This 207-nucleotide RNA was probed chemically with DMS and 2A3. For DMS, 8,194 sequencing reads were counted. The 2A3 profile rests on 6,900 reads. DMS adducts were read by reverse transcription with MarathonRT.
RNA sequence: GGGAACGACUCGAGUAGAGUCGAAAAAUGCAGGAAGCUCAUCCGUAUGGAAUAUCCCACCAGCACCAUAGCGACCAGCAUGAUCUGAGAGUUCUGUUCCGAGUCGCCGAUCUGGUUGAAGCUCUCGUCCGACAAGUCUGUCAAAUCCAUAUAGUGGGCUUAUUCUACUAUUCGUAGUAGAAUAAGCAAAAGAAACAACAACAACAAC
Reactivity to DMS in 0.01 (KOAc 150mM, MgCl2 10mM, bicine 150mM(pH8.5), 24C), signal-to-noise 3, nucleotides 027 to 156: a090u000g000c060a120g010g010a070a160g010c020u030c030a100u000c040c030g020u000a060u000g010g010a100a120u010a100u010c010c000c010a210c050c060a070g040c070a070c010c020a080u000a070g030c010g010a120c020c000a070g020c030a110u010g010a090u000c030u010g000a160g010a080g010u010u000c030u010g020u000u000c030c020g020a090g020u000c020g020c030c020g010a080u010c040u000g000g020u000u000g010a090a130g020c010u000c010u000c020g020u000c030c030g000a070c030a020a140g000u000c040u000g010u000c030a060a070a080u000c020c010a060u000a100u000a120g010u000g010g010
Reactivity to 2A3 in 0.01 (KOAc 150mM, MgCl2 10mM, bicine 150mM(pH8.5), 24C), signal-to-noise 6, nucleotides 027 to 156: a000u060g000c030a030g050g030a080a030g020c020u040c080a070u020c040c020g050u070a100u110g040g020a100a080u070a080u110c030c000c000a010c010c020a020g020c040a030c040c010a070u060a070g020c010g020a040c010c020a010g030c030a060u110g030a060u060c050u120g040a040g010a030g160u060u020c020u060g070u110u000c070c030g020a030g030u030c020g010c030c010g040a080u060c040u080g000g040u040u070g060a070a010g010c000u000c010u020c030g070u050c040c010g010a040c030a070a070g070u040c040u040g050u050c030a040a080a080u060c040c040a040u150a010u090a130g120u170g030g030